[RMDB]
RNA sequence: GGGAACGACUCGAGUAGAGUCGAAAAAAAGACUUCACAUCAAGUUUAGAGAUCGGCAACGCUUCAACCCACGAAUAGGUCGCGGUAUUUAUUACCUCACCAAUGAUAUUGUUUGAAAUCUCAAACUGGUACGACGUGUCAUAGAUAACUUGGUUUAAGUUUCGAUAUACUUCGGUAUAUCGAAACUAAAAGAAACAACAACAACAAC
Reactivity to 2A3 in 0.01 (KOAc 150mM, MgCl2 10mM, bicine 150mM(pH8.5), 24C), signal-to-noise 4, nucleotides 027 to 156: a000a000a000g120a050c070u090u050c110a060c010a090u040c010a020a060g000u010u060u140a110g040a070g000a070u050c070g000g000c030a090a140c040g040c130u110u040c030a070a090c020c010c020a040c070g020a070a040u120a140g010g030u070c130g000c030g000g010u010a020u020u110u020a200u250u030a020c000c000u040c020a020c020c000a000a020u020g020a020u060a060u130u090g090u080u040u060g180a200a200a120u130c120u000c070a010a030a030c030u020g010g010u050a040c100g000a000c030g060u040g010u030c010a030u040a070g080a080u100a080a010c020u020u030g030g060u080u080u140a060
Reactivity to DMS in 0.01 (KOAc 150mM, MgCl2 10mM, bicine 150mM(pH8.5), 24C), signal-to-noise 1, nucleotides 027 to 156: a080a030a130g020a050c040u010u000c040a120c080a100u030c000a020a080g030u000u000u010a060g000a080g010a120u000c060g010g000c010a050a100c010g000c060u000u000c060a100a080c040c000c010a190c090g010a090a080u000a110g000g000u000c030g060c050g010g030u000a020u000u000u000a160u050u020a020c030c010u040c090a130c060c020a170a060u000g010a090u000a100u000u000g000u000u000u010g030a090a040a030u020c090u040c020a000a070a070c050u010g000g000u000a090c040g010a060c070g000u000g000u000c040a160u000a100g040a100u000a040a060c060u010u010g010g010u000u000u000a040

Structure probing data (2A3 and DMS) for a 207-nucleotide construct.
Reactivities are given for positions 27 through 156.
The reactions ran in a buffer of 150 mM KOAc, 10 mM MgCl2 and 150 mM bicine (pH 8.5), at 24 C.